[RMDB]
RNA sequence: GGGAACGACUCGAGUAGAGUCGAAAAACUUCUGGCAUUAAUUUGAGUUGUGCCUUCUAGGGAGGAAGCUCUCCAGAGUGGCAAAGUAGAAAGUUUCUCCCUGUCCUGCCUAAAGAGGAAUGAUGACAUCCCUGCUUGGAUUCGUCCAAGCAGGGAUAAAAGAAACAACAACAACAAC
Reactivity to DMS in 0.01 (KOAc 150mM, MgCl2 10mM, bicine 150mM(pH8.5), 24C), signal-to-noise 1, nucleotides 027 to 126: a020c030u000u000c050u000g040g010c030a070u010u000a120a150u010u010u010g010a200g020u010u000g020u000g000c010c000u000u010c040u020a050g000g010g010a040g000g010a130a070g000c010u010c010u000c010c080a040g000a040g010u010g000g000c010a040a070a050g020u010a070g000a030a040a070g010u010u000u000c080u030c010c010c010u000g030u000c020c050u010g010c030c060u010a030a070a060g000a070g000g000a080a120u010g000a090u010g010a090c130